[RMDB]
RNA sequence: GGGAACGACUCGAGUAGAGUCGAAAAAGAGUUCGUAGUCGAAGUGGUUAUAACGGCGUAACAGGCCUUCUCUCAAGGAGGGUUAUGCGCCGUGAUUCCAUGGAAUAAGGAGCGUUUAGGGGCCAGGGAGAACAACAAUCUUCGGAUUGUUGUUCUCAAAAGAAACAACAACAACAAC
Reactivity to DMS in 0.01 (KOAc 150mM, MgCl2 10mM, bicine 150mM(pH8.5), 24C), signal-to-noise 6, nucleotides 027 to 126: a050g000a100g020u000u010c060g020u010a070g020u010c050g010a190a140g010u010g000g010u020u020a060u040a140a020c000g000g010c020g020u000a020a080c240a150g000g000c000c000u020u000c010u000c080u050c280a110a300g010g010a010g000g000g000u000u000a090u010g010c010g000c000c000g010u000g000a090u020u010c010c000a020u010g010g010a100a090u020a100a110g000g000a040g010c040g000u000u000u010a100g010g010g010g010c080c040a070g010g000
Reactivity to 2A3 in 0.01 (KOAc 150mM, MgCl2 10mM, bicine 150mM(pH8.5), 24C), signal-to-noise 5, nucleotides 027 to 126: a010g120a020g010u060u080c030g010u080a020g070u050c060g020a120a020g010u010g020g030u120u060a070u040a130a010c000g000g000c010g000u010a120a060c070a080g050g000c000c000u000u000c070u000c020u020c070a030a020g010g010a010g030g010g020u030u060a030u070g000c000g000c000c000g000u000g000a010u040u000c000c000a010u080g020g060a050a040u130a110a090g040g010a030g020c020g010u020u050u130a030g010g000g020g020c010c030a020g080g060